[RMDB]
RNA sequence: GGGAACGACUCGAGUAGAGUCGAAAAGAUAUGGAGACUGUCGCGAAGAACUAUGGUCAACUCGGAAACGAGGACCAUAGGGAGCGACUGUCUCCUAAGUCAAAAGCUGUGCCUUCGGGCACAGCAAGACUACCAUCAACUUCGGUUGAUGGUAGUCAAAAGAAACAACAACAACAAC
Reactivity to DMS in 0.01 (KOAc 150mM, MgCl2 10mM, bicine 150mM(pH8.5), 24C), signal-to-noise 1, nucleotides 027 to 126: g020a020u000a170u010g010g000a030g050a030c010u000g030u000c000g010c000g020a110a170g020a110a140c000u000a000u000g000g000u000c000a130a180c190u000c000g010g010a000a040a060c020g000a220g030g010a000c000c000a000u000a000g000g000g020a040g010c000g000a020c000u000g000u000c000u000c000c000u000a010a040g000u010c040a110a090a090a140g000c000u000g000u000g010c000c010u000u000c190g020g000g010c000a020c000a000g070c000a020a070
Reactivity to 2A3 in 0.01 (KOAc 150mM, MgCl2 10mM, bicine 150mM(pH8.5), 24C), signal-to-noise 1, nucleotides 027 to 126: g030a010u060a010u070g000g000a000g000a000c000u030g000u030c020g030c020g120a300a120g020a170a030c010u000a000u010g010g040u020c100a150a170c160u000c140g010g000a040a050a040c000g000a010g000g090a010c000c010a000u010a010g000g000g030a010g020c010g010a010c000u010g000u000c010u010c000c000u000a000a010g030u000c010a020a030a070a140g000c000u010g010u010g010c000c000u030u060c300g020g000g000c020a000c000a010g020c010a000a020
Chemical mapping of a 177-nucleotide RNA with DMS and 2A3. Conditions: 150 mM KOAc, 10 mM MgCl2 and 150 mM bicine (pH 8.5), 24 C. Source: RMDB library TTRDEL, as collected in RNAgym. Reactivities are given for positions 27 through 126. For DMS, 1,044 sequencing reads were counted.